[RMDB]
The record gives the reactivity of an RNA of 207 nucleotides to 2A3. For 2A3, 770 sequencing reads were counted.

RNA sequence: GGGAACGACUCGAGUAGAGUCGAAAAGAUUUAAACAGAUGGAAAUACACAAAUGUUUGAAUCCCAGUAACAAAAAUCCUGGUAUCUCGGGUAUACAGUAGUGCAGAUACUGUAUUUUUAAUGCUCCUUAGGUUUUCCAUCUUCGGAUGGAAAACAACAACUGAUUUCUCUUCGGAGAAAUCAGUUGAAAAGAAACAACAACAACAAC
Reactivity to 2A3 in 0.01 (KOAc 150mM, MgCl2 10mM, bicine 150mM(pH8.5), 24C), signal-to-noise 1, nucleotides 027 to 156: g000a000u000u000u090a000a000a000c000a010g020a010u050g010g050a170a200a190u280a100c130a000c000a040a030a000u010g020u030u000u020g000a030a010u040c030c010c000a050g050u130a080a060c030a100a160a050a030a070u080c000c010u030g040g070u170a090u080c230u060c010g010g000g000u040a050u000a030c000a000g030u030a010g050u030g180c090a000g030a130u000a020c000u030g000u000a010u000u060u010u060u160a120a060u080g020c030u090c100c060u110u110a000g020g040u000u000u010u000c000c000a000u000c010u010u060c140g040g000a000u000g000g000a000a010a000a000c000a000a000
Source: RMDB library M2RFOK, as collected in RNAgym.
2A3 adducts were read by reverse transcription with SuperScript II with manganese.
The RNA was probed in 150 mM KOAc, 10 mM MgCl2 and 150 mM bicine (pH 8.5) at 24 C.